[RMDB]
RNA sequence: GGGAACGACUCGAGUAGAGUCGAAAAGGGGACAGGGGACAGUCCAGGCAGACAGGUACAGCUGAGUAGGGCUCUGCCUGAGGUGUUCUGGCAUCAGGAGGCUGCCUGAUCCCCAACAGGCAUGACAUCUGUAAAGAGGCUUCGGCCUCUUUACAGAAAAAGAAACAACAACAACAAC
Reactivity to DMS in 0.01 (KOAc 150mM, MgCl2 10mM, bicine 150mM(pH8.5), 24C), signal-to-noise 2, nucleotides 027 to 126: g020g000g000g010a120c050a040g000g000g030g010a170c050a020g030u000c040c000a050g000g020c020a050g000a060c070a090g020g020u010a060c080a200g060c040u020g020a120g050u000a080g000g000g020c120u000c070u000g020c000c000u000g020a060g000g020u000g000u000u000c060u000g010g000c060a070u000c090a080g010g020a090g000g000c120u000g000c020c000u010g010a130u000c000c010c000c060a090a060c090a060g000g000c010a050u000g020a070c140a140
An RNA of 177 nucleotides, treated with DMS and read out base by base. The reactions ran in a buffer of 150 mM KOAc, 10 mM MgCl2 and 150 mM bicine (pH 8.5), at 24 C. Source: RMDB library OK2TRN, as collected in RNAgym.